Chemical mapping of a 207-nucleotide RNA with 2A3. 2A3 adducts were read by reverse transcription with SuperScript II with manganese. Reactivities are given for positions 27 through 156. The 2A3 profile rests on 620 reads. The data come from the RNA Mapping Database (RMDB), library OK3TST.
[RMDB]
RNA sequence: GGGAACGACUCGAGUAGAGUCGAAAAGGUUUAAUCGGGUCUACACCUCUCCAUACCGAUUAAACCAGCGAAAGCGACAACACGGAGAGGAUAGGAGUGCAUGCGUCAUAACCUCCCCAUAGCAUGCACUCCAGCGAGAGCGAACAACCGGGGAGGAGCGAUUUUAUGGAUUCGUCCAUAAAAUCGCAAAAGAAACAACAACAACAAC
Reactivity to 2A3 in 0.01 (KOAc 150mM, MgCl2 10mM, bicine 150mM(pH8.5), 24C), signal-to-noise 1, nucleotides 027 to 156: g000g010u000u000u000a000a000u000c010g020g040g120u100c080u090a030c000a090c040c000u000c000u000c000c000a040u070a100c010c000g000a000u000u010a000a000a000c010c000a000g010c090g040a100a110a010g040c030g080a070c060a160a040c050a050c160g010g030a010g020a000g020g010a010u080a020g020g000a000g020u000g010c020a000u030g000c000g070u140c140a150u090a300a300c000c000u060c000c000c000c000a020u100a010g000c020a000u000g000c000a000c000u000c000c000a010g000c040g030a060g010a000g030c000g040a060a000c040a110a040c130c080g000g000g000g000a000g000g000a000